[RMDB]
RNA sequence: GGGAACGACUCGAGUAGAGUCGAAAAACACAACCUUCAGGGGUGCGUCAGCUGAUUCUGGCGGUGUUGAGCGAGUGACACUGGGUGCAAUAAUUCGAAGGGUCUGCACUUUACGUCAAUUUUGUAGCUACUUUGCUGCGAUCAUAUGGAAUAUGAUCGUCAUGUAUCAAUUCGUUGAUACAUGACGAAAAGAAACAACAACAACAAC
Reactivity to DMS in 0.01 (KOAc 150mM, MgCl2 10mM, bicine 150mM(pH8.5), 24C), signal-to-noise 3, nucleotides 027 to 156: a040c040a070c050a060a100c030c010u000u000c090a150g020g000g010g000u000g020c040g000u010c040a150g000c060u000g010a200u000u000c030u020g000g030c030g010g020u010g010u010u000g000a120g040c060g030a090g030u000g010a100c090a110c050u000g000g040g020u000g000c020a050a090u000a040a110u020u010c070g000a130a110g000g040g020u000c040u010g010c030a040c010u000u010u000a050c070g000u000c060a080a140u000u000u000u000g030u000a090g030c020u000a070c100u000u000u000g010c020u010g000c000g020a100u000c050a040u000a060u010g030g020a030a300u000a060u000g000a110u010
Reactivity to 2A3 in 0.01 (KOAc 150mM, MgCl2 10mM, bicine 150mM(pH8.5), 24C), signal-to-noise 5, nucleotides 027 to 156: a000c080a010c020a060a120c030c020u110u110c080a070g000g030g000g000u040g020c010g020u040c020a040g010c050u090g070a120u150u060c020u060g040g010c020g020g020u050g020u030u090g040a050g010c050g020a060g050u050g020a010c010a000c060u060g050g000g000u040g010c010a040a120u110a120a100u170u140c100g070a050a060g020g010g020u000c020u020g010c030a010c000u050u090u110a050c060g020u020c040a080a110u050u060u050u150g030u010a000g010c010u030a080c140u150u130u140g000c010u010g010c020g030a040u030c010a040u050a050u110g120g040a130a070u090a040u110g050a060u020
Conditions: 150 mM KOAc, 10 mM MgCl2 and 150 mM bicine (pH 8.5), 24 C. Chemical mapping of a 207-nucleotide RNA with DMS and 2A3. For DMS, 5,486 sequencing reads were counted. For 2A3, 7,258 sequencing reads were counted.